[RMDB]
Background:
The record gives the reactivity of an RNA of 177 nucleotides to 2A3 and DMS. For DMS the reverse transcriptase was MarathonRT. High 2A3 reactivity points to a flexible backbone, as in loops and unpaired stretches. The 2A3 profile rests on 4,931 reads. The RNA was probed in 150 mM KOAc, 10 mM MgCl2 and 150 mM bicine (pH 8.5) at 24 C.

RNA sequence: GGGAACGACUCGAGUAGAGUCGAAAAGAUAUGGAUCGUUGACAGACAUGCUGGAUAAGGAUCGGAAACGAUCCGUAACAGCAACAGCUGUCACCGAUCCUAAGUCAAAGAGUGUCUUCGGACACUCCCUCUAGCGAUUCUUCGGAAUCGCUAGAGGAAAAGAAACAACAACAACAAC
Reactivity to 2A3 in 0.01 (KOAc 150mM, MgCl2 10mM, bicine 150mM(pH8.5), 24C), signal-to-noise 2, nucleotides 027 to 126: g010a020u060a010u180g000g000a000u000c000g000u010u030g010a000c000a010g040a050c050a150u110g010c000u000g020g000a010u010a060a000g000g020a000u010c030g040g040a020a110a050c000g000a000u000c000c000g010u000a000a020c010a000g080c020a020a010c020a020g050c000u000g000u010c000a010c000c020g000a000u000c000c000u010a030a030g060u030c060a170a220a000g010a000g020u010g000u000c020u140u210c300g090g000a010c000a010c010u010c030
Reactivity to DMS in 0.01 (KOAc 150mM, MgCl2 10mM, bicine 150mM(pH8.5), 24C), signal-to-noise 3, nucleotides 027 to 126: g010a110u010a300u000g000g010a010u000c000g020u000u010g010a020c010a000g000a060c160a300u000g020c000u000g010g000a090u000a080a270g000g000a030u000c010g000g000a120a110a230c000g000a000u000c000c000g010u010a060a270c000a010g030c020a000a090c300a180g000c000u000g000u000c020a020c000c000g000a010u000c000c000u000a000a150g010u000c040a130a070a210g010a010g010u000g000u000c000u000u010c300g040g010a020c000a000c000u000c000
Notes
Values cover nucleotides 27 to 126.